[RMDB]
Structure probing data (2A3) for a 207-nucleotide construct. For 2A3, 444 sequencing reads were counted. Conditions: 150 mM KOAc, 10 mM MgCl2 and 150 mM bicine (pH 8.5), 24 C.

RNA sequence: GGGAACGACUCGAGUAGAGUCGAAAAGAUAGAAAACAAACACGAACAUAUGUGCGACAAAGAAAAGGUGGAGACGUUACAACUGAUCAAAAAGGAAACGCGUUCGUGUCCUGUUUGUAGUACUCGCAUUUCCAAAAUCGAAGGGUGCGACCAAAUGAGUUCACCACAUGUUCGCAUGUGGUGAACUAAAAGAAACAACAACAACAAC
Reactivity to 2A3 in 0.01 (KOAc 150mM, MgCl2 10mM, bicine 150mM(pH8.5), 24C), signal-to-noise 1, nucleotides 027 to 156: g040a020u110a040g090a030a060a000a010c000a010a050a000c010a000c000g010a010a020c010a040u130a080u110g040u070g000c000g060a000c000a000a150a020g090a010a090a000a010g000g010u050g010g050a040g010a000c030g040u060u090a040c050a130a060c040u020g000a040u090c130a020a050a050a050a040g030g010a050a000a020c000g000c040g030u020u010c000g020u000g050u050c010c040u110g020u060u020u010g030u050a060g090u040a040c040u030c030g020c000a000u020u060u270c030c000a000a110a080a170u070c110g060a040a000g040g000g000u000g000c000g020a020c040c000a030a000a130u150g040